[RMDB]
RNA sequence: GGGAACGACUCGAGUAGAGUCGAAAAUGAGAGGACAUUCAGGACACUCUUGCUUUAGAUUUACUUUCUUGUUACCAGCUGAAGUGAUUGUAACUUAACAACGGAAAGUACAUCUUGAAAAUAGAGGAUGUCCCGUACAUUUCGAUGUACGGGACAUAAAAGAAACAACAACAACAAC
Reactivity to 2A3 in 0.01 (KOAc 150mM, MgCl2 10mM, bicine 150mM(pH8.5), 24C), signal-to-noise 2, nucleotides 027 to 126: u160g020a070g020a060g080g040a030c020a040u120u080c060a120g090g000a040c020a040c100u030c000u000u040g050c000u060u030u020a010g000a000u040u020u010a050c000u040u000u000c010u080u110g030u000u040a040c020c040a030g030c080u160g170a230a050g100u080g100a190u100u120g010u040a000a040c000u100u060a110a020c060a040a010c060g000g000a000a010a000g010u000a010c000a030u000c000u020u090g010a030a020a000a000u040a010g020a010g070g040
Reactivity to DMS in 0.01 (KOAc 150mM, MgCl2 10mM, bicine 150mM(pH8.5), 24C), signal-to-noise 2, nucleotides 027 to 126: u010g000a140g000a100g020g010a070c090a070u010u000c030a090g000g000a100c120a160c020u000c000u000u000g010c300u000u000u010a030g000a030u000u000u000a010c000u000u000u020c020u000u000g030u000u000a040c110c150a080g020c110u000g010a040a100g010u000g020a100u000u020g010u020a040a020c020u000u000a110a050c210a050a050c220g000g000a010a020a010g000u000a000c050a010u000c000u000u000g000a020a020a080a200u000a030g000a030g010g010
Background:
Conditions: 150 mM KOAc, 10 mM MgCl2 and 150 mM bicine (pH 8.5), 24 C. Structure probing data (2A3 and DMS) for a 177-nucleotide construct. For 2A3, 1,787 sequencing reads were counted. For DMS the reverse transcriptase was MarathonRT. Source: RMDB library OK2TRN, as collected in RNAgym.